[RMDB]
The record gives the reactivity of an RNA of 207 nucleotides to 2A3. For 2A3 the reverse transcriptase was SuperScript II with manganese. Values cover nucleotides 27 to 156. It was measured as part of the RMDB library OK3TST.
RNA sequence: GGGAACGACUCGAGUAGAGUCGAAAACGGACAACAUGACGCUGAUGCGCGACGCGCUGUCGAUCUUUGCGGACGAGCACCACGCGCAGAUGGUGAUGCCGACGCUCGCGAAAAUGAAGUUCGCGAACGAGGCGAUGUUCGGCGCGGAAGACGCGCAUACAGCUGAACGAUUCGUCGUUCAGCUGUAAAAAGAAACAACAACAACAAC
Reactivity to 2A3 in 0.01 (KOAc 150mM, MgCl2 10mM, bicine 150mM(pH8.5), 24C), signal-to-noise 1, nucleotides 027 to 156: c040g080g000a000c000a090a000c010a150u220g150a030c040g050c150u030g000a040u030g000c000g010c030g110a100c060g050c000g000c070u030g010u030c030g080a240u050c120u110u270u300g100c050g100g000a040c030g080a030g000c000a000c010c010a010c030g000c000g010c000a000g060a030u040g000g010u000g000a000u060g000c040c030g150a140c000g030c000u000c010g000c000g080a000a000a000a000u290g080a160a060g130u000u000c000g000c000g030a000a020c000g000a030g000g040c040g000a030u100g030u090u070c080g050g030c000g000c020g000g060a090a160g080a060c000g010c000g000c000a000